[RMDB]
RNA sequence: GGGAACGACUCGAGUAGAGUCGAAAAACGCGGAGAAGUGCAGGAAACGUGGGAUGAUAAAGUUCUAAGAGUCCUAACCAGCGCCAUAAAUGCAGAGGAAGUGUGCCAGACGGCUGUCACGUUCCAGUGCCCUAAAACGUUUCGACGUUUUAGGGCAAAAAGAAACAACAACAACAAC
Reactivity to DMS in 0.01 (KOAc 150mM, MgCl2 10mM, bicine 150mM(pH8.5), 24C), signal-to-noise 1, nucleotides 027 to 126: a040c090g000c090g000g000a080g000a030a080g030u010g020c100a010g000g000a070a130a100c130g040u000g020g000g010a070u000g000a180u030a050a050a160g000u010u000c050u010a070a120g010a130g030u010c010c020u010a100a160c050c050a090g040c070g000c040c040a020u000a040a050a180u000g050c050a040g010a190g000g010a050a080g030u010g010u000g000c010c010a060g000a150c180g020g000c090u000g000u000c010a100c080g000u000u000c000c010a100g000